[RMDB]
RNA sequence: GGGAACGACUCGAGUAGAGUCGAAAAGAUAUGGACUGAGAAGGCUCGAUAAGCCUGUAUCGGAAACGAUAUAAGGCUUUUGACGAGCCCUCAGUCCUAAGUCAAAAGACCAUGUUCGCAUGGUCAACUUUCAACGCAAGUUCGCUUGCGUUGAAAGAAAAGAAACAACAACAACAAC
Reactivity to 2A3 in 0.01 (KOAc 150mM, MgCl2 10mM, bicine 150mM(pH8.5), 24C), signal-to-noise 1, nucleotides 027 to 126: g000a000u040a000u060g010g020a000c010u030g010a000g110a300a270g080g020c020u030c030g200a270u100a300a000g000c020c010u020g000u000a000u000c010g010g000a010a020a010c020g000a000u000a000u010a010a060g000g070c070u070u030u110u170g300a190c050g000a000g000c010c000c000u000c000a000g010u000c000c000u030a000a010g000u000c010a060a000a000a080g000a000c000c000a000u020g000u000u100c300g030c130a000u030g000g000u000c000a010a000
Reactivity to DMS in 0.01 (KOAc 150mM, MgCl2 10mM, bicine 150mM(pH8.5), 24C), signal-to-noise 1, nucleotides 027 to 126: g020a020u000a190u040g000g000a030c000u000g000a020g000a140a190g000g000c000u000c020g030a140u010a030a070g020c000c000u000g020u000a000u000c000g000g000a090a020a060c000g000a010u000a000u000a020a040g000g010c000u000u000u030u000g040a210c090g020a000g010c000c000c000u000c000a000g010u010c000c000u000a000a060g000u000c010a100a120a110a100g010a010c000c000a010u010g020u010u020c100g030c010a010u020g000g050u000c000a020a080